[RMDB]
RNA sequence: GGGAACGACUCGAGUAGAGUCGAAAACUGCUUUGACUAUGUGUUACCACCCAUUCUUCAGUGUCAGAGUGGCCAUCUUGUUUGUAGCAACUGUCGCCCAAAGCUCACAUGUUGUCCAACUUGCCGGCGUAUUAAUAAGAUUCGUCUUAUUAAUACGAAAAGAAACAACAACAACAAC
Reactivity to 2A3 in 0.01 (KOAc 150mM, MgCl2 10mM, bicine 150mM(pH8.5), 24C), signal-to-noise 8, nucleotides 027 to 126: c010u040g040c020u060u050u080g040a050c040u060a070u190g080u020g030u070u100a060c020c030a050c020c020c020a060u070u040c030u090u090c050a050g020u020g040u120c010a010g020a030g070u050g020g020c020c010a080u050c050u060u120g080u120u070u110g090u100a030g000c010a020a050c040u030g030u060c050g040c000c020c010a070a080a010g000c020u060c020a050c010a050u120g010u060u020g030u010c010c010a040a050c070u050u080g080c040c020g100g030
Reactivity to DMS in 0.01 (KOAc 150mM, MgCl2 10mM, bicine 150mM(pH8.5), 24C), signal-to-noise 9, nucleotides 027 to 126: c040u000g010c040u000u000u000g010a060c050u010a100u010g010u000g010u000u000a090c080c050a110c050c020c020a210u000u000c060u000u000c080a070g010u000g010u000c050a050g000a060g030u000g010g010c050c040a060u000c060u000u000g010u000u000u000g020u000a090g010c040a050a060c060u000g010u000c090g010c020c020c050a050a080a130g010c040u000c070a050c080a070u000g000u000u000g010u000c050c040a050a080c060u000u000g010c060c050g000g010
An RNA of 177 nucleotides, treated with 2A3 and DMS and read out base by base. It was measured as part of the RMDB library OK2TRN. The reactions ran in a buffer of 150 mM KOAc, 10 mM MgCl2 and 150 mM bicine (pH 8.5), at 24 C. DMS adducts were read by reverse transcription with MarathonRT.